This 177-nucleotide RNA was probed chemically with 2A3 and DMS.
RNA sequence: GGGAACGACUCGAGUAGAGUCGAAAAUAAUGGGGAGUUGAGUACGGCAGCUGCCGCGCCUGCAAGGCCGGUUAGGAAGAGCAGGGCUGCGUCCGCCGGGCGCGGCCUCAAGAGGAAACAGGCCGAAGUUGGAUGUAUCUUUCGAGAUACAUCCAACAAAAGAAACAACAACAACAAC
Reactivity to 2A3 in 0.01 (KOAc 150mM, MgCl2 10mM, bicine 150mM(pH8.5), 24C), signal-to-noise 1, nucleotides 027 to 126: u200a010a120u220g000g060g000g000a040g020u080u040g050a040g040u090a080c040g020g000c020a070g020c020u080g000c050c000g010c080g000c020c010u140g110c070a120a100g030g000c000c060g000g040u080u120a010g010g060a050a050g040a040g140c040a050g000g000g000c010u010g000c010g000u010c020c040g130c090c080g030g000g000c020g010c000g010g000c010c000u010c010a050a040g040a010g040g080a020a090a080c030a040g060g000c010c000g020a060a010
Reactivity to DMS in 0.01 (KOAc 150mM, MgCl2 10mM, bicine 150mM(pH8.5), 24C), signal-to-noise 2, nucleotides 027 to 126: u020a090a120u020g010g000g010g000a090g020u000u000g000a060g000u000a080c050g030g000c060a110g010c090u000g020c020c010g010c100g010c000c020u000g000c090a070a190g020g000c020c010g000g020u000u000a060g030g000a090a110g010a180g030c110a170g010g010g000c020u000g000c000g000u000c020c040g010c250c170g000g010g010c020g030c000g010g000c000c000u010c060a030a090g010a100g010g000a090a040a050c080a060g000g000c020c040g030a100a100
Background:
The reactions ran in a buffer of 150 mM KOAc, 10 mM MgCl2 and 150 mM bicine (pH 8.5), at 24 C.